[RMDB]
RNA sequence: GGGAACGACUCGAGUAGAGUCGAAAAUUCUAAUGAUGCAAUAAUGACUCGUUGUUUAGCUAUUCAUUCUUGUUUUAUAGAACGUGUGGAUUGGGAUAUAGAGUAUCCUUAUAUCUCACAUGAAAAGAUAGCCGUGCGUUCGCGCACGGCAAAAGAAACAACAACAACAAC
Reactivity to DMS in 0.01 (KOAc 150mM, MgCl2 10mM, bicine 150mM(pH8.5), 24C), signal-to-noise 2, nucleotides 027 to 129: u000u040c010u140a000a070u020g000a100u030g030c040a000a170u050a000a000u000g000a030c130u000c080g000u000u000g070u050u030u030a070g030c060u000a040u000u000c060a030u010u030c120u000u000g040u100u000u020u000a070u000a150g000a060a080c010g040u020g090u080g010g010a020u020u020g010g000g000a040u010a000u000a200g050a200g000u000a050u000c030c000u030u050a100u020a010u010c000u000c030a110c000a140u070g000a040a050a070a090g080a030u000a050
Reactivity to 2A3 in 0.01 (KOAc 150mM, MgCl2 10mM, bicine 150mM(pH8.5), 24C), signal-to-noise 1, nucleotides 027 to 129: u110u000c020u090a200a020u140g090a030u020g000c000a000a000u000a070a040u000g000a000c040u000c150g030u020u040g280u160u300u240a000g000c000u000a000u000u000c000a000u000u000c010u020u000g000u000u060u000u060a020u000a000g030a170a060c000g000u040g000u000g000g030a000u000u100g030g000g000a000u000a030u090a130g220a050g150u000a000u040c000c000u020u000a210u000a000u050c180u030c140a000c000a000u000g000a000a000a000a000g020a030u010a040
About this RNA:
This 170-nucleotide RNA was probed chemically with DMS and 2A3. 2A3 adducts were read by reverse transcription with SuperScript II with manganese. For 2A3, 1,318 sequencing reads were counted. Reactivities are given for positions 27 through 129.